[RMDB]
RNA sequence: GGGAACGACUCGAGUAGAGUCGAAAAAUCCUGGCAUUCGUGCCAGGAUGUUUACCGAGAAAGUCGCUCGGUAUAAAAGGGCAACCCUUGGAAACAAGGGAAUAAUCGCAGUGUUCGCACUGCGAAAAUAUUGAUCGAAGUUCGCUUCGAUCAAUAUAAAAGAAACAACAACAACAAC
Reactivity to DMS in 0.01 (KOAc 150mM, MgCl2 10mM, bicine 150mM(pH8.5), 24C), signal-to-noise 4, nucleotides 027 to 126: a020u000c000c000u000g000g010c000a020u000u000c150g040u000g020c000c000a010g010g010a000u000g000u010u000u000a070c000c000g000a020g010a090a130a130g020u010c140g000c010u000c000g010g010u000a020u000a030a060a080a060g010g000g020c130a120a150c000c000c000u000u020g000g000a160a110a210c000a000a010g000g000g000a080a030u020a120a110u000c010g000c000a010g000u000g000u000u020c210g010c000a000c010u000g010c000g000a010a010a050
Reactivity to 2A3 in 0.01 (KOAc 150mM, MgCl2 10mM, bicine 150mM(pH8.5), 24C), signal-to-noise 2, nucleotides 027 to 126: a010u030c010c000u010g010g000c010a030u020u060c150g090u070g010c010c000a010g010g000a010u000g000u000u040u020a030c000c000g000a000g030a040a300a000g200u120c070g000c110u000c000g020g040u000a000u020a000a040a010a010g040g000g010c020a090a120c000c000c000u010u010g000g020a010a060a040c000a000a000g000g010g010a010a030u060a000a000u000c000g000c000a000g000u030g030u040u110c170g020c070a010c010u000g000c000g020a000a000a000
This 177-nucleotide RNA was probed chemically with DMS and 2A3. High DMS reactivity at an A or C suggests that its Watson-Crick edge is free. The reactions ran in a buffer of 150 mM KOAc, 10 mM MgCl2 and 150 mM bicine (pH 8.5), at 24 C.